[RMDB]
RNA sequence: GGGAACGACUCGAGUAGAGUCGAAAACAAAUGAAUGCGCUUUUGUCGCCCGGAUUGACCGUCCUGACUCGAGUUCAAUCAAGAGAAUUUCAUCUGGGCUUGCAUGCCGACUUACAGCCUCGAUGUGCUUCCAUCUAAUUUGCUCAUCAGUGUCAAGUAUGCAGCGUCCGUUCGCGGACGCUGCAUAAAAAGAAACAACAACAACAAC
Reactivity to 2A3 in 0.01 (KOAc 150mM, MgCl2 10mM, bicine 150mM(pH8.5), 24C), signal-to-noise 1, nucleotides 027 to 156: c110a020a050a050u140g080a130a030u130g030c040g030c060u290u200u080u080g040u120c010g000c000c010c000g050g020a070u050u100g060a030c000c040g040u020c000c000u100g010a020c060u070c080g040a020g030u080u040c030a110a070u090c050a230a000g050a000g050a050a110u120u200u180c000a010u000c030u010g000g030g030c050u040u120g010c000a040u090g070c080c040g120a180c010u050u110a010c100a030g010c000c010u000c000g020a030u020g000u020g050c020u040u050c010c010a020u000c040u020a140a090u060u050u030g010c010u010c010a130u050c050a050g020u010g050u200c010a020a020g060
Structure probing data (2A3) for a 207-nucleotide construct. Conditions: 150 mM KOAc, 10 mM MgCl2 and 150 mM bicine (pH 8.5), 24 C. The 2A3 profile rests on 628 reads.